[RMDB]
RNA sequence: GGGAACGACUCGAGUAGAGUCGAAAAAGCGCGAGAAGCGGCGUCGGCUUCAGCGGCGCGAGGGGUCAGCCGUUCAGAGGCUCUUUCAACGGGUCUUGGAAAUGUCGUCGGUGAUGUUGCGGCUGCACCCACUACGUGCUUUCGAGCACGUAGUGGGAAAAGAAACAACAACAACAAC
Reactivity to DMS in 0.01 (KOAc 150mM, MgCl2 10mM, bicine 150mM(pH8.5), 24C), signal-to-noise 1, nucleotides 027 to 126: a110g010c000g000c000g000a150g000a040a050g010c000g020g000c060g030u010c000g000g010c040u030u020c040a080g000c060g000g010c000g000c020g020a120g020g000g000g030u000c030a040g020c000c000g010u000u020c060a100g010a060g000g000c000u010c000u000u060u050c300a120a060c270g000g000g000u000c000u000u030g000g000a100a030a070u010g000u000c000g000u000c110g040g000u030g010a010u010g010u000u000g010c160g000g000c000u000g000c080a120
Reactivity to 2A3 in 0.01 (KOAc 150mM, MgCl2 10mM, bicine 150mM(pH8.5), 24C), signal-to-noise 2, nucleotides 027 to 126: a000g030c010g000c000g020a100g020a150a000g000c000g030g020c030g020u080c040g040g000c020u030u010c080a180g270c050g130g000c020g010c000g010a070g030g070g020g020u090c020a010g010c020c020g000u000u030c040a050g010a020g070g030c000u020c010u060u300u150c060a100a090c110g000g040g010u000c020u000u010g020g050a000a010a000u070g000u040c030g030u030c140g100g080u170g060a040u030g010u000u040g000c030g030g000c020u020g000c030a070